[RMDB]
RNA sequence: GGGAACGACUCGAGUAGAGUCGAAAAUCCCUGCCGGCUGGGCUGGUAGAAGACGCGCCCUUUCAGCUCCGCGGGGAGGUAGUUCUGGGCCACCCAGUGCUCACGGUAGGAGUGAGGAUAGAGAUACUCAACUGCGUAAGUUCGCUUACGCAGUUGAAAAAGAAACAACAACAACAAC
Reactivity to 2A3 in 0.01 (KOAc 150mM, MgCl2 10mM, bicine 150mM(pH8.5), 24C), signal-to-noise 1, nucleotides 027 to 126: u000c000c000c020u010g080c030c000g080g040c020u020g000g060g080c090u020g000g080u100a110g070a240a030g020a020c040g060c000g110c060c000c000u000u040u010c020a000g000c020u000c190c100g000c020g030g070g000g010a020g050g050u060a050g010u050u010c040u010g030g160g000c000c000a060c000c000c000a040g000u050g020c020u060c020a020c080g030g030u020a030g090g040a080g000u000g050a050g000g040a070u050a170g100a010g010a020u010a130c050
Reactivity to DMS in 0.01 (KOAc 150mM, MgCl2 10mM, bicine 150mM(pH8.5), 24C), signal-to-noise 2, nucleotides 027 to 126: u000c010c010c000u000g000c040c030g000g000c010u000g000g020g000c230u000g000g000u000a050g010a270a040g000a050c090g030c130g000c070c000c010u000u010u000c100a110g010c050u010c140c130g040c130g000g000g000g000a040g020g000u010a080g000u000u000c010u000g000g010g010c050c010a080c000c010c000a060g000u000g000c060u010c100a160c000g010g020u000a040g020g010a110g010u000g010a060g010g010a110u010a100g010a110g020a100u010a070c130